[RMDB]
RNA sequence: GGGAACGACUCGAGUAGAGUCGAAAAUUUACUCUGCUGGCAGUAUUCGCCGGCAAGAUCAAGCAGAUCCACUGGAUCAUGUGGCUGAUUUCAGCACUAUUCGUGGUGUACUUUGCUAUGGAUCCAAUCGGUCUGAAUUGUUCGCAAUUCAGACCGAAAAAGAAACAACAACAACAAC
Reactivity to DMS in 0.01 (KOAc 150mM, MgCl2 10mM, bicine 150mM(pH8.5), 24C), signal-to-noise 1, nucleotides 027 to 126: u010u040u010a060c050u020c090u000g000c050u010g000g010c030a140g040u010a110u000u000c170g000c010c000g010g040c020a020a040g000a060u010c130a050a090g010c080a030g000a020u000c020c080a070c130u000g040g000a020u000c110a050u010g010u000g020g000c010u000g000a260u000u000u010c060a040g030c000a010c000u020a140u010u020c130g000u010g020g070u000g020u000a070c080u000u000u030g010c000u010a050u000g000g000a040u000c000c090a060a040
Reactivity to 2A3 in 0.01 (KOAc 150mM, MgCl2 10mM, bicine 150mM(pH8.5), 24C), signal-to-noise 1, nucleotides 027 to 126: u000u000u060a070c000u040c050u000g020c010u000g000g000c000a030g080u170a300u150u300c000g080c010c040g000g000c000a000a010g020a030u120c060a120a000g040c020a000g020a040u020c010c010a030c080u100g010g000a010u060c060a230u200g000u040g200g020c000u020g030a130u110u160u280c020a020g050c000a020c010u030a020u040u080c080g050u050g110g080u060g010u070a060c040u000u060u060g000c010u010a080u120g100g000a000u000c000c000a000a120

Description:
Chemical mapping of a 177-nucleotide RNA with DMS and 2A3. The DMS profile rests on 905 reads. For 2A3, 835 sequencing reads were counted. For DMS the reverse transcriptase was MarathonRT. It was measured as part of the RMDB library OK2TST.